[RMDB]
RNA sequence: GGGAACGACUCGAGUAGAGUCGAAAACUCGAGGAGCAUAGAGGCGUGCGAACUCGACAUGAAUCAGCCUCCAUUAGAAGGUACUCGUGAGAGCGAAGUACCGAGAAUUGGUCGACGAUCACCGGCGAUCUUUCGACCUUGAAUUAAGCCGGCAAAAAUUAAUACGUCACUUCGGUGACGUAUUAAUAAAAGAAACAACAACAACAAC
Reactivity to DMS in 0.01 (KOAc 150mM, MgCl2 10mM, bicine 150mM(pH8.5), 24C), signal-to-noise 2, nucleotides 027 to 156: c010u000c020g010a040g010g010a300g030c060a100u000a070g000a090g030g090c020g040u000g010c000g000a080a210c030u000c000g050a110c050a090u000g020a090a070u000c090a080g000c030c000u000c000c110a110u000u000a110g050a140a240g000g000u000a000c000u000c000g030u000g010a300g000a240g000c020g010a060a070g000u000a000c000c000g000a040g000a060a150u000u000g030g010u030c000g020a030c300g010a070u000c000a040c030c010g010g000c050g000a070u000c040u000u000u000c010g010a050c000c030u000u000g020a090a100u010u000a090a230g010c000c000g000g020c060a020a030a080a060
Reactivity to 2A3 in 0.01 (KOAc 150mM, MgCl2 10mM, bicine 150mM(pH8.5), 24C), signal-to-noise 2, nucleotides 027 to 156: c030u030c000g010a000g000g010a130g000c010a000u040a070g000a000g000g010c010g000u020g000c020g050a130a060c010u020c040g030a030c090a150u300g080a100a150u150c030a080g000c000c000u000c060c000a150u110u190a070g060a160a020g020g000u000a010c000u000c010g020u010g030a060g000a000g050c000g020a120a000g000u000a000c010c020g020a030g000a010a120u250u200g000g000u030c000g000a020c000g010a030u030c020a000c110c000g000g000c010g010a000u010c000u030u110u050c000g000a000c010c000u010u080g010a000a010u040u040a060a000g000c010c000g010g000c010a050a090a020a000
This 207-nucleotide RNA was probed chemically with DMS and 2A3. The DMS profile rests on 2,748 reads. For 2A3 the reverse transcriptase was SuperScript II with manganese.